[RMDB]
RNA sequence: GGGAACGACUCGAGUAGAGUCGAAAAACACUGCGAUUUUCAAUGAUCUCCGGCAGACUAAACUCGGUGGUGGCCACAGGAGCCACUGGGGCAGGAGUUAUGGGAGCAGCAGGCGGAGGUCCAUACAUAGGAUUUAAUGAUUCGUCAUUAAAUCCUAAAAAGAAACAACAACAACAAC
Reactivity to DMS in 0.01 (KOAc 150mM, MgCl2 10mM, bicine 150mM(pH8.5), 24C), signal-to-noise 7, nucleotides 027 to 126: a060c070a080c010u010g000c020g010a090u030u010u000u010c050a070a100u020g000a070u020c000u010c010c020g010g000c050a180g000a150c160u020a040a080a290c020u000c020g010g010u020g020g010u010g000g010c030c050a100c180a100g000g000a300g010c010c020a030c020u010g000g020g000g010c030a070g000g010a050g010u000u010a050u000g010g010g000a050g010c160a090g000c030a030g000g010c060g010g000a080g020g010u010c010c130a060u040a050c170a170
Reactivity to 2A3 in 0.01 (KOAc 150mM, MgCl2 10mM, bicine 150mM(pH8.5), 24C), signal-to-noise 9, nucleotides 027 to 126: a000c060a010c020u040g030c030g090a120u040u050u080u130c100a120a140u180g040a050u050c000u000c010c010g070g000c040a060g030a130c060u150a070a140a030c010u010c030g050g000u030g000g030u030g060g130c010c010a240c080a180g100g020a020g010c010c000a000c000u010g000g010g020g020c040a060g010g040a020g020u050u030a070u120g050g000g010a050g010c040a010g000c020a020g070g020c050g040g050a040g020g050u000c030c020a030u080a150c040a050